[RMDB]
RNA sequence: GGGAACGACUCGAGUAGAGUCGAAAAGAUAUGGAGGGGCUGAAAUUCCCGUAACAGCAUCGAUCUAUAAGUAUCGGAAACGAUACAUAGGGAGCUGGAGAAGGGAAUUUCAGCCCCUCCUAAGUCACAUACGAUCUUGGUUCGCCAAGAUCGUAUGAAAAGAAACAACAACAACAAC
Reactivity to DMS in 0.01 (KOAc 150mM, MgCl2 10mM, bicine 150mM(pH8.5), 24C), signal-to-noise 1, nucleotides 027 to 126: g010a010u000a300u010g000g000a070g080g050g030g040c000u000g010a010a020a020u000u000c000c000c010g010u010a210a250c000a010g000c030a300u000c230g000a050u000c010u010a000u000a080a110g030u000a010u000c000g010g020a100a100a300c000g010a010u000a010c000a100u000a000g000g010g000a030g000c040u000g000g020a070g000a210a130g000g010g020a000a000u010u000u010c000a010g000c000c030c000c000u010c000c000u010a020a030g000u000c050a260